The record gives the reactivity of an RNA of 177 nucleotides to DMS and 2A3. 2A3 adducts were read by reverse transcription with SuperScript II with manganese. For DMS, 4,019 sequencing reads were counted. For 2A3, 3,218 sequencing reads were counted. Conditions: 150 mM KOAc, 10 mM MgCl2 and 150 mM bicine (pH 8.5), 24 C. DMS adducts were read by reverse transcription with MarathonRT. Source: RMDB library OK2TRN, as collected in RNAgym.

RNA sequence: GGGAACGACUCGAGUAGAGUCGAAAAGGAGGGAGGCUGUCCUUUGUCGCUGCCCACUUCGGAGGGCAGAGGUCUCGUGACCAUGGGGACCUGGCCUGCCUGAGGAGCUGGAAGGUAAAAAGGAACACGCCAUACAUCAAUUCGUUGAUGUAUGGCGAAAAGAAACAACAACAACAAC
Reactivity to DMS in 0.01 (KOAc 150mM, MgCl2 10mM, bicine 150mM(pH8.5), 24C), signal-to-noise 4, nucleotides 027 to 126: g010g000a130g000g010g000a060g010g010c030u000g000u000c010c020u000u000u000g010u000c140g020c010u000g000c260c010c020a100c040u010u010c100g050g010a180g030g000g020c000a010g000a030g010g010u010c010u000c180g010u010g010a080c120c100a130u020g020g030g000g000a010c030c250u000g010g010c150c010u010g000c000c010u000g010a210g000g000a040g020c130u000g010g000a130a120g000g000u000a010a060a030a050a060g000g000a050a040c160a130
Reactivity to 2A3 in 0.01 (KOAc 150mM, MgCl2 10mM, bicine 150mM(pH8.5), 24C), signal-to-noise 2, nucleotides 027 to 126: g060g010a020g000g020g020a030g000g000c040u010g020u100c000c000u010u010u060g150u090c070g020c030u020g000c000c010c000a030c020u080u080c100g110g060a050g000g020g000c000a000g010a000g020g000u000c020u030c070g100u110g070a090c040c020a120u130g020g030g000g000a000c000c000u010g040g070c010c000u010g050c020c000u030g030a050g020g000a010g000c130u050g040g010a060a020g000g010u060a030a080a020a010a000g060g010a060a030c040a000